[RMDB]
RNA sequence: GGGAACGACUCGAGUAGAGUCGAAAAUGUGUUUUGUACAAGUGUUAAUACAUCAUCAUCAGAAGGGUUUCUGAUUGGUAUUAACUACUUAGGACCAUACUGUGACAAAGCAAUAGUAGAUGGGAAUAUAAUGCAUGCCAAUUAUAUAUUUUGGAGACAGAGUCCACUAAUUCGUUAGUGGACUCUGAAAAGAAACAACAACAACAAC
Reactivity to DMS in 0.01 (KOAc 150mM, MgCl2 10mM, bicine 150mM(pH8.5), 24C), signal-to-noise 2, nucleotides 027 to 156: u010g060u000g040u000u000u000u000g020u000a120c120a030a050g010u010g040u000u000a020a020u000a010c010a090u020c090a130u000c170a040u020c010a020g020a030a090g020g040g040u000u000u000c010u000g000a020u000u000g050g020u000a010u010u000a000a020c010u010a020c020u000u000a100g000g010a150c020c020a140u000a060c010u030g010u000g010a300c100a070a080a130g020c060a050a020u000a050g010u000a050g010a090u000g010g020g000a090a120u000a080u000a040a060u010g000c070a080u010g010c000c010a010a100u030u010a090u000a080u010a090u010u000u000u010g010g010a300g010a230
Reactivity to 2A3 in 0.01 (KOAc 150mM, MgCl2 10mM, bicine 150mM(pH8.5), 24C), signal-to-noise 4, nucleotides 027 to 156: u100g060u010g010u030u040u030u060g070u080a050c030a060a010g020u000g000u030u010a000a000u010a030c030a070u120c030a050u080c010a000u030c020a070g010a020a040g180g210g080u080u080u000c000u000g000a000u010u030g020g000u000a000u000u000a010a010c010u030a020c010u020u020a040g000g040a010c010c000a000u030a100c050u060g040u050g120a030c040a070a130a030g030c010a040a080u030a070g070u040a030g020a190u060g010g010g070a080a010u110a020u030a100a040u070g020c010a020u060g020c000c020a030a010u110u090a060u030a040u000a080u150u160u000u070g030g030a050g000a030